The record gives the reactivity of an RNA of 177 nucleotides to DMS and 2A3. Reactivities are given for positions 27 through 126.
RNA sequence: GGGAACGACUCGAGUAGAGUCGAAAAGGAUCCUCUCACAGGAUUGUCUCUGUGAUCCGAAACUCCAACAGUAUUGCUUCGGGUCACCUACAGCAAUACUGUAGGUAUAGAGAGUAGGAGAGGAUCGUGCCUAUGAUAGGUUCGCCUAUCAUAGGCAAAAAGAAACAACAACAACAAC
Reactivity to DMS in 0.01 (KOAc 150mM, MgCl2 10mM, bicine 150mM(pH8.5), 24C), signal-to-noise 4, nucleotides 027 to 126: g030g010a000u000c000c000u010c000u010c000a120c100a150g020g010a140u000u000g000u000c070u000c060u010g000u000g010a070u000c010c010g010a060a070a080c030u000c130c090a100a100c120a070g000u000a160u000u000g010c050u000u000c200g000g000g000u000c170a050c010c010u000a040c120a010g000c050a070a070u010a300c010u000g000u000a010g000g000u010a090u000a030g010a060g000a070g020u000a110g000g000a050g000a010g020g010a000u000c000g010
Reactivity to 2A3 in 0.01 (KOAc 150mM, MgCl2 10mM, bicine 150mM(pH8.5), 24C), signal-to-noise 2, nucleotides 027 to 126: g040g010a010u030c010c010u000c000u000c000a120c040a100g120g060a240u100u240g160u060c050u000c020u090g060u030g020a060u000c010c010g000a040a010a020c030u040c030c040a040a030c010a090g100u120a100u120u160g010c040u000u030c020g060g000g000u070c100a100c050c000u020a030c040a010g050c040a080a040u060a180c010u000g010u000a000g010g000u040a040u170a080g090a000g010a000g040u060a100g040g020a000g000a020g000g000a000u000c010g000
The RNA was probed in 150 mM KOAc, 10 mM MgCl2 and 150 mM bicine (pH 8.5) at 24 C.
DMS (dimethyl sulfate) methylates the pairing face of unpaired adenines and cytosines.
For 2A3 the reverse transcriptase was SuperScript II with manganese.
For DMS, 3,610 sequencing reads were counted.
The data come from the RNA Mapping Database (RMDB), library OK2TRN.